An RNA of 177 nucleotides, treated with DMS and 2A3 and read out base by base. For 2A3 the reverse transcriptase was SuperScript II with manganese. The RNA was probed in 150 mM KOAc, 10 mM MgCl2 and 150 mM bicine (pH 8.5) at 24 C. DMS adducts were read by reverse transcription with MarathonRT. The data come from the RNA Mapping Database (RMDB), library M2PK50.
RNA sequence: GGGAACGACUCGAGUAGAGUCGAAAAACGGAUAGAUUCGUCUAUCCGUGCAUCUCAUAACAGACAGAGAAAGUCUGCUAAGAUCUCACAUAGAUAAAGAGAAGAGAGUCGAGUUCGCUCGACUCAAUUCGAGUGAGAUUUUCGAAUCUCACUCGAAAAAAGAAACAACAACAACAAC
Reactivity to DMS in 0.01 (KOAc 150mM, MgCl2 10mM, bicine 150mM(pH8.5), 24C), signal-to-noise 1, nucleotides 027 to 126: a000c000g020g000a000u000a010g000a030u000u030c150g010u000c020u000a000u000c000c000g020u000g010c120a190u000c010u000c010a080u010a060a070c020a010g000a010c000a100g010a130g010a160a120a090g010u000c000u000g010c050u000a020a040g010a080u000c010u010c020a090c090a120u000a090g030a110u000a030a050a100g010a040g000a050a110g010a280g000a000g030u010c000g000a010g020u000u010c180g000c010u000c010g020a010c010u010c010a000a060
Reactivity to 2A3 in 0.01 (KOAc 150mM, MgCl2 10mM, bicine 150mM(pH8.5), 24C), signal-to-noise 1, nucleotides 027 to 126: a010c000g010g030a000u010a010g000a000u000u050c110g030u050c110u000a000u020c000c000g000u010g000c010a050u000c020u040c030a050u050a160a060c000a010g020a000c010a020g160a000g140a280a220a000g080u010c020u010g020c050u060a070a060g010a150u030c030u010c030a090c010a140u180a050g100a040u150a130a170a010g100a030g010a040a030g090a010g000a000g010u000c000g010a000g000u040u070c140g000c050u010c010g010a000c000u040c000a000a030